[RMDB]
RNA sequence: GGGAACGACUCGAGUAGAGUCGAAAACGGCUCAGGACGACGGUUGCACCCCCCGCGGCGGUCCCUGCUAGCCGGACACCGCUGGCAACCCGGCGCCAAGACGUGCGCGCAAGGGCGGGCGCCCGCGACGAAACAUUGUGUUCGCACAAUGUUUCGUAAAAGAAACAACAACAACAAC
Reactivity to DMS in 0.01 (KOAc 150mM, MgCl2 10mM, bicine 150mM(pH8.5), 24C), signal-to-noise 2, nucleotides 027 to 126: c020g000g000c010u040c050a030g010g050a070c090g010a150c030g000g040u020u010g000c070a120c070c050c080c030c010c040g010c030g000g000c030g030g030u010c060c000c050u000g000c160u010a030g000c020c030g000g020a070c070a090c020c020g000c020u000g000g010c000a030a130c010c020c000g020g000c040g000c000c020a130a150g010a090c230g030u050g000c140g040c000g000c060a050a120g000g000g010c100g000g010g010c300g000c000c010c040g010c070g000
Reactivity to 2A3 in 0.01 (KOAc 150mM, MgCl2 10mM, bicine 150mM(pH8.5), 24C), signal-to-noise 3, nucleotides 027 to 126: c000g020g000c020u020c040a040g010g100a070c110g000a000c020g070g040u030u050g000c030a270c020c000c000c000c000c010g000c020g030g010c030g030g030u030c020c010c000u030g030c090u040a010g010c050c020g010g000a020c040a020c000c030g000c020u030g000g000c000a000a150c000c000c000g020g000c010g010c000c010a080a040g120a180c080g060u120g030c050g000c000g010c100a140a290g030g000g010c160g010g010g000c000g010c000c000c010g020c030g010